Chemical mapping of a 177-nucleotide RNA with 2A3 and DMS.
For 2A3, 2,926 sequencing reads were counted.
It was measured as part of the RMDB library OK1LIB.
The reactions ran in a buffer of 150 mM KOAc, 10 mM MgCl2 and 150 mM bicine (pH 8.5), at 24 C.
RNA sequence: GGGAACGACUCGAGUAGAGUCGAAAAAGGAUGGACAGACCCGCGAGCACGCGUUGCUGGCCUUCACUUUGGGUGUGAAGCAGAUGGUUGUGUGCUGCAACAAGAUGGACGACAAGACUGUGAACUACCUAUGAGUAGGCUUCGGCCUACUCAUAGGAAAAGAAACAACAACAACAAC
Reactivity to 2A3 in 0.01 (KOAc 150mM, MgCl2 10mM, bicine 150mM(pH8.5), 24C), signal-to-noise 4, nucleotides 027 to 126: a000g120g000a050u040g010g030a000c000a000g050a060c010c020c010g050c020g050a030g010c070a020c060g050c000g070u110u160g010c010u000g030g060c010c000u000u000c040a050c040u070u130u160g130g040g020u110g000u000g050a020a010g020c050a050g040a070u140g040g040u100u060g010u030g030u030g030c030u020g060c010a040a020c000a020a090g040a020u100g000g040a050c020g000a010c030a050a040g020a040c040u050g020u020g060a050a040c010u060a070
Reactivity to DMS in 0.01 (KOAc 150mM, MgCl2 10mM, bicine 150mM(pH8.5), 24C), signal-to-noise 3, nucleotides 027 to 126: a040g010g000a030u000g010g000a030c030a090g000a070c040c010c050g030c030g010a140g030c080a070c060g050c080g000u040u010g000c030u010g000g000c090c020u000u010c040a070c000u000u000u010g020g020g000u040g000u030g020a060a100g020c030a050g000a080u020g030g030u010u030g010u010g010u020g010c050u000g000c050a130a100c120a050a090g010a040u000g000g000a120c030g020a090c050a050a150g000a070c080u020g000u030g020a040a120c050u000a110